[RMDB]
RNA sequence: GGGAACGACUCGAGUAGAGUCGAAAAGAAAAACAGGAAGAACCGUUGCUCUCAUACACCCCAUUGUAUUGGGUGGAUUGUUCUUUUAUACAUUGUGGGCAGGUCACUUAGGAUGUCCUCAAAGAAAGGUCAUCAUAAUAUUCGUAUUAUGAUGACCAAAAGAAACAACAACAACAAC
Reactivity to DMS in 0.01 (KOAc 150mM, MgCl2 10mM, bicine 150mM(pH8.5), 24C), signal-to-noise 6, nucleotides 027 to 126: g030a080a070a060a080a090c180a090g000g000a040a050g020a060a050c040c060g040u010u010g000c050u010c020u000c040a060u020a070c040a050c100c030c030c110a120u020u020g010u020a100u030u010g010g010g010u010g010g000a120u010u010g010u000u000c010u010u000u020u010a080u030a090c170a080u020u000g010u010g000g000g000c000a020g010g020u020c050a080c200u020u020a090g010g020a100u000g000u000c000c000u010c030a030a030a080g000a080a110a100
Reactivity to 2A3 in 0.01 (KOAc 150mM, MgCl2 10mM, bicine 150mM(pH8.5), 24C), signal-to-noise 7, nucleotides 027 to 126: g120a000a100a010a010a010c060a020g050g040a050a040g030a040a000c010c010g030u040u060g030c000u000c010u010c030a010u040a080c020a040c030c050c010c020a100u100u230g060u090a090u050u110g030g000g030u030g020g030a030u010u040g010u030u010c000u020u050u020u020a130u010a100c090a120u060u050g010u040g030g000g000c010a010g010g130u060c030a010c000u110u130a060g100g060a030u020g000u010c000c000u040c020a030a050a020g170a030a090a010